[RMDB]
Source: RMDB library RFM100, as collected in RNAgym. The record gives the reactivity of an RNA of 177 nucleotides to 2A3. As a SHAPE reagent, 2A3 marks flexible, mostly unpaired nucleotides at the ribose 2'-OH. The reactions ran in a buffer of 150 mM KOAc, 10 mM MgCl2 and 150 mM bicine (pH 8.5), at 24 C. For 2A3 the reverse transcriptase was SuperScript II with manganese.
RNA sequence: GGGAACGACUCGAGUAGAGUCGAAAAGGAUAGCUGGUUCCCCCCGAGACAUACCGCAGUAUGACCCGUCCGGAGGUUGGCGGUGGGGUAGAGCACUGAUAGGAGGAUCCGGGGGGUGACACCCUCGCCCUGGCGGUAGGUUCGCCUACCGCCAGGGAAAAGAAACAACAACAACAAC
Reactivity to 2A3 in 0.01 (KOAc 150mM, MgCl2 10mM, bicine 150mM(pH8.5), 24C), signal-to-noise 2, nucleotides 027 to 126: g130g000a140u180a050g090c080u040g010g070u000u080c060c000c000c000c030c000g040a080g000a290c050a010u180a080c040c000g010c010a000g030u150a050u050g110a050c040c000c000g140u230c040c010g140g020a200g160g080u070u100g110g030c000g000g010u050g080g000g000g000u090a000g000a020g280c120a030c020u020g000a160u290a120g000g010a030g050g000a050u090c000c000g000g000g000g070g000g000u030g000a000c000a050c000c070c020u000c080g000